RNA sequence: GGGAACGACUCGAGUAGAGUCGAAAAUGCAAUUAGUUCGCUAAUUGCACAUGUCUAGUCGCUAGAAAACGAUCAAAACUAGCGACUAGACUUAAUUGAUCGGGGGCCUGGCUUUCGAGCCAGGCAACUUAACAUCGUAUUUCGAUACGAUGUUAAGAAAAGAAACAACAACAACAAC
Reactivity to DMS in 0.01 (KOAc 150mM, MgCl2 10mM, bicine 150mM(pH8.5), 24C), signal-to-noise 6, nucleotides 027 to 126: u000g000c000a000a010u000u000a000g010u000u010c230g030c000u000a000a010u000u000g000c000a030c180a070u010g000u000c000u000a010g000u000c000g010c000u000a000g000a080a050a150a130c110g010a080u000c080a060a070a120a160c010u000a000g010c000g000a010c010u000a000g000a000c010u000u000a020a070u010u000g000a070u000c030g020g010g010g010g000c000c000u000g010g000c000u000u000u010c150g010a020g010c010c000a010g000g010c020a000a010
Reactivity to 2A3 in 0.01 (KOAc 150mM, MgCl2 10mM, bicine 150mM(pH8.5), 24C), signal-to-noise 4, nucleotides 027 to 126: u060g000c000a000a000u000u000a000g020u020u040c150g010c120u000a010a010u000u010g060c010a010c010a040u070g010u000c000u000a000g010u010c010g010c010u010a020g070a120a190a040a040c130g100a190u160c090a010a060a040a150c000u000a010g010c000g010a000c000u000a000g000a000c000u000u010a010a010u020u060g070a050u220c100g020g000g000g060g000c000c000u000g010g000c000u100u080u100c180g030a000g000c010c000a000g000g000c000a000a000